[RMDB]
RNA sequence: GGGAACGACUCGAGUAGAGUCGAAAAUGGAUUCGAAGAUUAUUGUACUUGUUGCUGGUGUGUUCCCAUAUAUGGAAAUUGAUAUCAGUGACACACUUCUACAAUACAAUCAAAGCCUUCUCAUGCAAUGGAGGUCAUUAUUCGUAAUGACCUCCAUAAAAGAAACAACAACAACAAC
Reactivity to 2A3 in 0.01 (KOAc 150mM, MgCl2 10mM, bicine 150mM(pH8.5), 24C), signal-to-noise 1, nucleotides 027 to 126: u030g010g010a000u130u000c080g040a010a030g030a090u070u080a020u000u040g010u020a020c050u030u000g000u000u010g020c050u000g060g050u010g010u030g030u050u020c040c010c010a040u080a000u030a010u050g060g080a030a150a120u150u220g080a020u060a030u110c070a020g000u010g030a000c000a000c000a010c020u070u130c050u060a000c000a020a030u030a020c030a030a060u080c020a040a070a000g040c010c010u000u000c010u010c000a030u150g000c090a010
Reactivity to DMS in 0.01 (KOAc 150mM, MgCl2 10mM, bicine 150mM(pH8.5), 24C), signal-to-noise 2, nucleotides 027 to 126: u010g010g000a110u010u000c170g000a080a100g000a110u020u000a020u000u000g000u010a010c250u000u000g010u000u000g000c140u010g010g000u000g040u010g000u000u000c060c020c140a090u020a060u000a050u000g020g000a050a040a040u010u010g000a050u000a010u000c040a050g020u010g000a030c000a050c300a030c130u000u010c080u000a010c010a010a070u010a040c110a090a100u000c110a020a070a100g000c030c000u000u000c000u000c060a120u010g010c190a080
Annotation
Source: RMDB library OK2TST, as collected in RNAgym. This 177-nucleotide RNA was probed chemically with 2A3 and DMS. 2A3 adducts were read by reverse transcription with SuperScript II with manganese. DMS adducts were read by reverse transcription with MarathonRT. For DMS, 1,395 sequencing reads were counted.